Chemical mapping of a 177-nucleotide RNA with 2A3 and DMS. For 2A3 the reverse transcriptase was SuperScript II with manganese. The RNA was probed in 150 mM KOAc, 10 mM MgCl2 and 150 mM bicine (pH 8.5) at 24 C. Reactivities are given for positions 27 through 126.
RNA sequence: GGGAACGACUCGAGUAGAGUCGAAAAGAUAUGGAACUAGCAACGAUAAGCUGGGCAUCGGAAACGAUGUUAGCUUUUGACGUUGCAUUCCUAAGUCAAAACGAAUUGCAGUUCGCUGCAAUUCGAACAUUGAUGGGUAGUUCGCUACCCAUCAAUGAAAAGAAACAACAACAACAAC
Reactivity to 2A3 in 0.01 (KOAc 150mM, MgCl2 10mM, bicine 150mM(pH8.5), 24C), signal-to-noise 5, nucleotides 027 to 126: g030a000u050a020u140g000g010a040a030c120u090a200g000c010a000a000c020g070a110u050a170a020g020c000u060g110g140g000c010a000u010c000g030g030a050a030a030c010g000a000u000g000u040u010a000g000c000u070u080u080u260g170a080c010g000u000u000g000c000a000u000u000c000c010u020a120a040g060u030c040a070a020a060a090c030g010a000a010u000u010g000c000a000g020u040u130c260g110c180u000g000c000a000a000u020u010c000g000a050a010
Reactivity to DMS in 0.01 (KOAc 150mM, MgCl2 10mM, bicine 150mM(pH8.5), 24C), signal-to-noise 6, nucleotides 027 to 126: g000a050u010a300u010g000g010a010a020c300u010a140g010c010a010a010c010g020a140u000a020a020g020c000u010g020g020g010c010a000u000c000g010g000a120a080a160c000g010a010u000g020u000u000a030g010c000u000u000u010u000g020a140c060g010u000u000g010c010a140u000u000c000c000u000a060a130g010u000c030a050a060a080a240c020g010a010a000u010u000g000c010a010g010u000u010c220g020c010u000g010c000a000a010u000u000c000g010a050a110